[RMDB]
RNA sequence: GGGAACGACUCGAGUAGAGUCGAAAAGGACUUCAAUGUCUCCGCGCCCCACAUGCACGCCACCUGCCUGCAAGAGCUGGAUCUGCAGCCGGGGCACAGGUUCCUGGACGUGGGCAGCGGCUGCGGCAGCUCAUGGUGGGUUCGCCCACCAUGAGCUAAAAGAAACAACAACAACAAC
Reactivity to 2A3 in 0.01 (KOAc 150mM, MgCl2 10mM, bicine 150mM(pH8.5), 24C), signal-to-noise 1, nucleotides 027 to 126: g000g000a050c030u120u060c210a220a300u220g010u020c040u060c040c040g000c000g010c020c000c040c010a050c020a070u230g060c060a000c110g040c020c010a100c050c010u040g030c000c040u030g040c080a110a080g020a020g120c080u090g060g070a210u040c020u160g010c010a020g000c020c020g020g090g050g030c020a020c000a030g050g070u120u040c000c030u070g060g030a060c100g100u060g030g000g000c000a040g040c010g000g040c000u030g000c010g060g010c000
Reactivity to DMS in 0.01 (KOAc 150mM, MgCl2 10mM, bicine 150mM(pH8.5), 24C), signal-to-noise 1, nucleotides 027 to 126: g000g000a090c040u000u000c250a110a090u010g000u010c030u010c080c040g000c150g010c070c000c000c080a090c080a060u000g010c000a030c180g020c040c050a050c160c040u000g000c050c010u000g000c050a100a190g000a060g010c040u000g000g010a090u000c050u000g040c010a020g010c070c070g000g000g000g030c020a050c020a000g000g010u000u000c040c120u000g010g010a070c060g000u000g020g020g010c030a040g000c080g000g010c030u000g000c030g000g000c080